This 177-nucleotide RNA was probed chemically with 2A3. The RNA was probed in 150 mM KOAc, 10 mM MgCl2 and 150 mM bicine (pH 8.5) at 24 C.

[RMDB]
RNA sequence: GGGAACGACUCGAGUAGAGUCGAAAAAGCAGGCCAUACGUGGCCUGCAACCGCACCAUGCUCUAUCCAUCUCGAAUUGAGUGAGUUGGCAAGAACUUUGGCACGAGCGAGUGGUACGCCACUCGCAUGCGCGUGGAUUUUUCGAAAUCCACGCGCAAAAAGAAACAACAACAACAAC
Reactivity to 2A3 in 0.01 (KOAc 150mM, MgCl2 10mM, bicine 150mM(pH8.5), 24C), signal-to-noise 2, nucleotides 027 to 126: a000g000c000a000g020g060c000c000a050u070a110c290g110u040g010g000c000c000u020g000c010a000a000c000c000g040c040a060c000c000a000u050g000c020u060c010u030a120u090c000c020a100u020c020u000c010g300a300a250u270u140g040a070g140u290g000a030g000u050u010g000g020c120a060a000g030a040a030c060u130u200u180g050g000c070a000c100g080a030g000c000g020a000g000u060g000g030u050a050c220g010c000c020a030c030u000c020g010c000a010

Reactivities are rounded to 0.1 and cut off at 0 and 3.